[RMDB]
RNA sequence: GGGAACGACUCGAGUAGAGUCGAAAAUAUGAUCAUGGCGGUCUUGAGCCCUAACAGACCUGAAAUAAUUAUUGCGGAUAUGAUUGCUUAAUUCAGAGCACAUCUAAGGGACUGAGUUGCCUACAUACUUGAUGAAACAGUUCGCUGUUUCAUCAAGAAAAGAAACAACAACAACAAC
Reactivity to 2A3 in 0.01 (KOAc 150mM, MgCl2 10mM, bicine 150mM(pH8.5), 24C), signal-to-noise 2, nucleotides 027 to 126: u160a090u080g050a020u050c040a060u090g030g000c030g010g060u100c000u010u120g130a080g000c000c030c000u010a050a040c010a060g110a090c000c000u000g050a070a060a000u130a030a080u170u120a100u210u150g010c090g060g040a030u030a010u300g050a020u030u110g020c050u100u060a050a020u300u050c050a070g010a020g070c040a050c020a040u000c040u050a040a090g040g000g030a040c030u030g020a020g080u100u080g100c020c000u030a030c040a000u050a050
Reactivity to DMS in 0.01 (KOAc 150mM, MgCl2 10mM, bicine 150mM(pH8.5), 24C), signal-to-noise 3, nucleotides 027 to 126: u000a050u020g010a120u010c160a100u000g010g040c040g010g010u000c020u010u000g010a120g030c030c010c010u010a090a140c160a020g010a110c020c030u000g010a080a080a110u010a040a070u010u000a110u000u000g020c080g000g000a090u010a040u000g010a130u000u000g020c030u020u010a030a080u000u000c180a060g000a050g010c040a040c180a040u000c020u010a120a160g000g000g000a020c010u010g010a050g010u000u000g000c000c000u000a080c080a030u000a080